The data come from the RNA Mapping Database (RMDB), library RNAMAK. An RNA of 207 nucleotides, treated with DMS and 2A3 and read out base by base.
RNA sequence: GGGAACGACUCGAGUAGAGUCGAAAAAAACGCUGGGUCCCACGUAACUUCCCACUAAGCAACAGCUACACUGAAGCGCGCACGGUGUAGACAUGCUUACUGGGAAGGAGAAGUGGGACCUGUGCUGAAGCGCGCACGGCAACCGAAAGGUGCGAAAGCUAGUAAAAGUGUUCGCACUUUUACUAGCAAAAGAAACAACAACAACAAC
Reactivity to DMS in 0.01 (KOAc 150mM, MgCl2 10mM, bicine 150mM(pH8.5), 24C), signal-to-noise 2, nucleotides 027 to 156: a100a020a030c050g040c050u010g000g010g070u000c020c010c010a030c050g000u000a110a170c030u000u000c000c010c000a020c000u010a010a060g030c020a130a110c130a140g000c000u000a010c000a010c000u000g030a050a080g020c030g020c030g030c010a300c040g040g050u000g010u000a010g000a010c040a190u010g040c000u000u000a000c050u010g000g040g010a030a000g010g020a090g000a130a290g010u000g010g030g000a000c010c000u000g090u010g000c020u000g030a050a060g000c010g020c040g010c030a300c020g000g020c010a120a100c000c020g000a100a080a170g010g000u000g040c020g040a080a080a170
Reactivity to 2A3 in 0.01 (KOAc 150mM, MgCl2 10mM, bicine 150mM(pH8.5), 24C), signal-to-noise 2, nucleotides 027 to 156: a000a000a010c040g000c010u060g000g010g000u030c000c000c000a010c000g010u020a040a040c000u000u010c000c000c000a010c030u020a020a000g010c080a060a050c050a250g020c010u000a000c010a010c010u060g040a260a030g000c000g000c010g000c010a010c020g020g010u010g000u010a000g040a020c060a140u300g000c000u000u000a010c020u000g000g000g000a000a000g000g000a010g000a010a010g010u000g000g010g020a000c000c000u000g000u000g000c000u020g020a130a030g000c010g010c000g020c000a010c010g000g000c010a000a040c000c000g070a040a040a020g000g010u020g010c010g030a110a030a000
For 2A3 the reverse transcriptase was SuperScript II with manganese. The reactions ran in a buffer of 150 mM KOAc, 10 mM MgCl2 and 150 mM bicine (pH 8.5), at 24 C. For DMS the reverse transcriptase was MarathonRT.